[RMDB]
RNA sequence: GGGAACGACUCGAGUAGAGUCGAAAAGAUAUGGAGCUCGUAAGUGGCUAUGAAGUGUGGACAAAUUAUAUGGUCGGAAACGACCAUAUAAUGAGGCCACAUGGAGCCAUAUCGAGCUCCUAAGUCAGACAUAGAAACUGUUCGCAGUUUCUAUGUCAAAAGAAACAACAACAACAAC
Reactivity to 2A3 in 0.01 (KOAc 150mM, MgCl2 10mM, bicine 150mM(pH8.5), 24C), signal-to-noise 2, nucleotides 027 to 126: g000a010u030a050u140g000g000a020g020c000u020c030g040u230a300a300g110u090g030g000c010u040a300u290g000a040a000g000u000g010u030g000g000a020c000a020a300a000u000u000a000u010a000u010g000g010u030c010g000g000a050a060a000c010g000a010c000c000a000u000a010u000a000a000u000g060a020g030g000c000c000a010c000a000u000g020g000a010g000c010c000a020u020a030u050c010g000a000g000c000u010c000c000u000a010a000g000u000c030a010
Reactivity to DMS in 0.01 (KOAc 150mM, MgCl2 10mM, bicine 150mM(pH8.5), 24C), signal-to-noise 2, nucleotides 027 to 126: g000a040u010a300u000g000g010a030g030c010u000c000g010u010a140a280g030u000g000g040c000u020a300u010g040a120a150g030u000g000u010g010g010a030c040a070a270a010u000u010a000u010a000u010g010g010u010c000g000g000a060a130a200c000g010a020c010c000a000u000a000u000a000a000u000g020a300g000g000c020c000a000c000a000u000g010g000a060g000c000c000a040u010a250u000c020g000a030g000c020u010c000c000u000a000a080g000u000c020a200